[RMDB]
Chemical mapping of a 207-nucleotide RNA with 2A3. The reactions ran in a buffer of 150 mM KOAc, 10 mM MgCl2 and 150 mM bicine (pH 8.5), at 24 C. The data come from the RNA Mapping Database (RMDB), library OK3TST.

RNA sequence: GGGAACGACUCGAGUAGAGUCGAAAACGAUCUGUUUUCAGAUCGAGCUACGUUUUCGUAGCGAUGGGUAGCGCUCCUCCCAGCUACCCUAUAUUUGAUAUAAAAGGACAUCCGCCGGUACCAGGGUGUCCGGGAGGAGAUAUAAUAGGUGCCGGGACGAGUGAUUUACUUUCGAGUAAAUCACUCGAAAAGAAACAACAACAACAAC
Reactivity to 2A3 in 0.01 (KOAc 150mM, MgCl2 10mM, bicine 150mM(pH8.5), 24C), signal-to-noise 2, nucleotides 027 to 156: c030g010a000u000c010u020g060u200u240u300u300c050a010g000a000u000c000g000a020g000c000u000a000c010g060u080u060u130u300c030g000u010a000g000c010g010a070u060g000g000g000u000a000g000c020g020c070u030c000c000u010c000c000c000a010g000c000u010a000c000c020c000u010a020u000a000u070u140u140g060a020u040a000u070a250a070a060a100g000g000a010c010a010u000c030c030g040c090c110g050g000u000a010c000c000a000g000g030g020u000g000u000c040c000g010g010g000a010g000g070a000g020a000u210a000u010a020a110u120a070g000g010u020g010c000c080g020g050g020a010